[RMDB]
RNA sequence: GGGAACGACUCGAGUAGAGUCGAAAAGAUAUGGAUCGGUUAGGCGAAGAACUCAUUUCGGAAACGAAAUGAGGGGAGCCUGGACCGAUCCUAAGUCAAAACGCUAUGGCGUUCGCGCCAUAGCGAAGUAACCAUUUACCUUCGGGUAAAUGGUUACAAAAGAAACAACAACAACAAC
Reactivity to DMS in 0.01 (KOAc 150mM, MgCl2 10mM, bicine 150mM(pH8.5), 24C), signal-to-noise 2, nucleotides 027 to 126: g000a040u000a160u000g000g000a010u000c000g010g010u010u010a030g030g010c010g020a120a180g000a100a200c000u000c000a010u000u010u010c010g000g010a060a050a080c010g020a000a010a010u010g000a010g020g010g010g010a180g020c000c010u010g030g010a010c000c000g020a010u000c000c000u010a010a050g000u000c010a090a090a070a210c030g000c000u000a010u000g010g010c000g030u000u010c190g020c000g020c000c010a020u010a000g020c000g000a000a050
Reactivity to 2A3 in 0.01 (KOAc 150mM, MgCl2 10mM, bicine 150mM(pH8.5), 24C), signal-to-noise 2, nucleotides 027 to 126: g000a000u020a010u080g000g000a000u010c000g000g000u000u020a000g000g000c130g180a300a030g060a120a040c000u000c000a000u000u000u000c010g020g010a020a010a010c000g000a010a000a000u000g000a010g000g000g020g090a040g000c010c000u000g050g070a000c000c000g000a010u000c000c000u000a000a010g010u000c010a020a030a070a130c010g020c000u000a000u000g010g030c030g060u090u130c300g030c030g000c070c000a000u000a000g000c000g000a010a000
This 177-nucleotide RNA was probed chemically with DMS and 2A3. For 2A3, 4,572 sequencing reads were counted. The DMS profile rests on 2,415 reads.